[RMDB]
RNA sequence: GGGAACGACUCGAGUAGAGUCGAAAAGGGGUCUCCUUGCAUUCGAGGGUUAGACAUGCUCUGAAGCCUCCACGGAGCAACAGCUAACCUCCCCACCGAAUGAGGAGACGGAGGCACCCAAAACAUUCUAAAAUCUGUUCGCAGAUUUUAGAAUGAACAAUGUCCAUAGGUUCGCCUAUGGACAUUGAAAAGAAACAACAACAACAAC
Reactivity to DMS in 0.01 (KOAc 150mM, MgCl2 10mM, bicine 150mM(pH8.5), 24C), signal-to-noise 2, nucleotides 027 to 156: g020g020g020g010u000c010u010c000c000u020u000g030c200a150u010u000c030g010a300g000g000g020u000u010a030g000a070c030a300u000g040c010u010c000u000g030a060a140g030c010c010u000c020c000a300c010g010g000a020g040c020a100a070c110a090g020c020u010a040a030c000c030u020c300c080c010c060a300c100c070g010a040a080u010g010a130g000g000a060g000a020c050g000g010a040g090g060c030a140c000c010c000a010a080a110a230c010a000u000u000c010u000a010a000a010a020u000c010u000g020u000u000c300g020c010a000g000a010u020u000u000u010a000g020a010a010u000g010a090a230
Reactivity to 2A3 in 0.01 (KOAc 150mM, MgCl2 10mM, bicine 150mM(pH8.5), 24C), signal-to-noise 2, nucleotides 027 to 156: g110g000g020g010u010c000u000c010c010u040u150g190c010a010u000u000c010g030a070g020g040g010u000u010a010g020a090c110a220u230g000c000u010c000u020g050a110a030g000c000c000u030c000c010a010c020g000g000a000g040c030a050a050c070a050g170c010u010a000a010c000c010u100c090c050c030c040a060c060c000g010a010a000u010g000a010g010g000a000g010a000c010g000g000a000g000g000c000a040c000c000c010a050a090a000a010c000a000u000u000c000u010a000a000a000a000u010c000u010g050u060u060c190g010c130a000g000a010u010u000u000u000a000g000a000a000u000g000a020a010
Conditions: 150 mM KOAc, 10 mM MgCl2 and 150 mM bicine (pH 8.5), 24 C. An RNA of 207 nucleotides, treated with DMS and 2A3 and read out base by base. 2A3 is a SHAPE reagent: it acylates the 2'-hydroxyl of flexible nucleotides of all four kinds. The 2A3 profile rests on 4,380 reads. In probing experiments dimethyl sulfate is read out at A N1 and C N3, which are open when not base-paired.